[RMDB]
RNA sequence: GGGAACGACUCGAGUAGAGUCGAAAAGUCCCACCCUUUCUUACCUUUUGGCCGGCAUGGUCCCAGCCUCCUCGCUGGCGCCGGCUGGGCAACAUUCCGAGGGGACCGUCCCUCGGUAAUGGCGAAUACACUGUAACGUUCGCGUUACAGAAAAGAAACAACAACAACAAC
Reactivity to DMS in 0.01 (KOAc 150mM, MgCl2 10mM, bicine 150mM(pH8.5), 24C), signal-to-noise 6, nucleotides 027 to 129: g020u000c000c000c000a240c020c070c060u010u010u020c010u030u060a170c090c060u040u000u000u070g020g020c000c000g020g030c060a090u060g000g000u050c300c000c010a050g000c010c110u050c160c110u030c200g020c000u020g000g000c250g000c000c030g020g000c000u000g000g030g030c000a050a060c070a010u000u000c000c020g000a040g010g000g010g010a140c180c260g020u080c020c010c010u020c000g000g010u050a000a000u040g000g030c140g020a100a080u050a000c210a160
Reactivity to 2A3 in 0.01 (KOAc 150mM, MgCl2 10mM, bicine 150mM(pH8.5), 24C), signal-to-noise 6, nucleotides 027 to 129: g060u020c000c010c000a040c000c000c000u070u230u110c050u090u150a170c050c010u120u090u060u180g140g010c010c010g000g000c040a120u220g060g040u110c040c000c020a010g000c010c040u160c020c040u110c100g000c000u010g030g010c010g000c000c000g040g000c020u010g000g000g000c020a080a040c000a060u020u000c000c000g000a000g030g000g010g030a070c010c070g300u300c000c000c000u000c000g000g000u020a010a010u020g020g000c030g060a030a040u190a100c100a010
Description:
Structure probing data (DMS and 2A3) for a 170-nucleotide construct. Conditions: 150 mM KOAc, 10 mM MgCl2 and 150 mM bicine (pH 8.5), 24 C. DMS adducts were read by reverse transcription with MarathonRT. Values cover nucleotides 27 to 129.